Description
Source: RMDB library TTRDES, as collected in RNAgym. The record gives the reactivity of an RNA of 177 nucleotides to DMS and 2A3. For DMS the reverse transcriptase was MarathonRT. For DMS, 8,332 sequencing reads were counted. Values cover nucleotides 27 to 126. The reactions ran in a buffer of 150 mM KOAc, 10 mM MgCl2 and 150 mM bicine (pH 8.5), at 24 C. For 2A3 the reverse transcriptase was SuperScript II with manganese.
RNA sequence: GGGAACGACUCGAGUAGAGUCGAAAAGAUAUGGAUUGACGUAGACAUGCGAGCUCAUCGGAAACGAUGGUCUCGCAACAGCUACCGUCAAUCCUAAGUCAAAACACACGAACUUCGGUUCGUGUGACUCUAUGCGAUACUUCGGUAUCGCAUAGAGAAAAGAAACAACAACAACAAC
Reactivity to DMS in 0.01 (KOAc 150mM, MgCl2 10mM, bicine 150mM(pH8.5), 24C), signal-to-noise 6, nucleotides 027 to 126: g000a020u010a300u010g000g010a020u000u000g000a020c010g010u000a010g010a070c120a270u010g020c000g010a000g010c030u000c000a010u000c010g010g000a090a050a120c000g010a020u000g000g010u000c000u010c000g010c000a010a000c270a200g000c010u000a010c110c150g000u010c000a000a010u010c000c000u000a000a080g000u000c020a120a080a120a210c030a010c000a000c000g010a010a010c000u000u010c220g030g010u000u000c000g010u010g010u000g000a060
Reactivity to 2A3 in 0.01 (KOAc 150mM, MgCl2 10mM, bicine 150mM(pH8.5), 24C), signal-to-noise 5, nucleotides 027 to 126: g030a010u040a010u100g010g000a000u000u000g010a000c010g000u010a010g040a080c150a260u300g010c010g000a010g000c010u000c020a000u000c010g030g000a030a030a010c010g000a010u000g000g000u020c010u000c000g000c000a010a000c010a000g010c000u010a010c060c090g010u010c000a000a000u000c000c000u000a020a010g020u010c030a040a040a210a090c010a000c000a000c010g010a020a010c010u080u190c300g160g010u000u000c000g000u000g000u000g010a000